[RMDB]
RNA sequence: GGGAACGACUCGAGUAGAGUCGAAAAGUGAUCACUGUUCUUUUGCCAAGACACGGGGUGGACAAUAAGAUUCCUUUACAAAGCACUGGUGUAAGUGUUCGCCUGGUGCUGCAAAAAGCGGCUCACUCCUAAACAUCACCUUCGGGUGAUGUUUAGGAAAAGAAACAACAACAACAAC
Reactivity to DMS in 0.01 (KOAc 150mM, MgCl2 10mM, bicine 150mM(pH8.5), 24C), signal-to-noise 1, nucleotides 027 to 126: g000u000g000a040u010c300a200c000u000g020u050u050c200u000u000u020u000g010c020c300a030a100g000a130c010a020c040g010g000g020g040u000g000g000a010c030a000a070u000a210a100g030a130u000u000c010c000u000u000u040a010c230a060a020a130g070c160a040c070u000g000g000u000g000u000a090a100g050u040g010u000u000c000g000c020c000u010g070g060u030g010c000u000g020c000a030a010a010a010a030g000c000g020g000c050u000c050a000c000u010
Reactivity to 2A3 in 0.01 (KOAc 150mM, MgCl2 10mM, bicine 150mM(pH8.5), 24C), signal-to-noise 4, nucleotides 027 to 126: g010u040g030a040u030c040a030c070u020g040u100u050c090u050u010u010u030g010c010c030a120a030g050a090c010a010c040g070g000g000g010u010g030g020a010c000a060a050u040a060a090g050a090u050u120c000c000u010u090u110a160c130a060a150a000g050c060a050c100u070g000g050u060g030u150a150a090g010u030g000u040u010c000g010c000c000u050g050g010u010g000c000u010g000c000a010a000a000a000a030g020c030g020g020c020u010c000a030c000u010